[RMDB]
RNA sequence: GGGAACGACUCGAGUAGAGUCGAAAAGGUAGAUAUGCAUACACUUCCCAUGCGCACCAUCUCAUGUGAUCGUGUCCACAGCUUUGUGAGUUGAGAGGGGUGGGAGUGAUUAUCCCCAACCACAAGCAAGGCUUCCGGGCUUCAAGGGUUGGAGACAGACGGUGAUUAAUUUCGAUUAAUCACCGUCAAAAGAAACAACAACAACAAC
Reactivity to DMS in 0.01 (KOAc 150mM, MgCl2 10mM, bicine 150mM(pH8.5), 24C), signal-to-noise 1, nucleotides 027 to 156: g000g050u010a080g010a150u020a040u000g020c000a250u000a010c050a010c090u000u000c000c010c000a130u000g020c020g040c050a290c020c040a080u020c010u000c040a100u000g060u000g030a090u000c050g020u010g030u000c000c000a100c050a060g020c110u000u000u010g030u000g020a230g030u000u020g010a080g030a200g010g000g010g000u000g000g010g010a090g000u000g000a080u010u000a100u000c010c000c000c010a020a100c000c020a090c030a050a300g000c010a070a040g000g000c020u000u000c020c070g020g000g030c030u010u000c050a060a050g040g000g050u000u000g010g000a250g000a270c070a200
Reactivity to 2A3 in 0.01 (KOAc 150mM, MgCl2 10mM, bicine 150mM(pH8.5), 24C), signal-to-noise 2, nucleotides 027 to 156: g050g010u040a030g070a120u100a050u270g060c030a030u020a070c020a030c060u040u030c000c000c000a010u080g000c070g030c010a020c030c020a000u040c020u030c020a120u130g060u100g090a050u130c140g020u030g040u110c000c060a090c030a030g000c030u000u090u020g020u020g020a060g010u060u080g090a070g040a020g060g030g010g000u080g010g060g010a010g010u120g070a180u040u240a060u140c000c010c000c010a000a020c000c000a010c000a020a000g000c000a040a000g040g010c000u020u030c080c090g020g020g010c030u110u060c090a050a010g040g000g040u010u030g030g050a070g030a040c020a070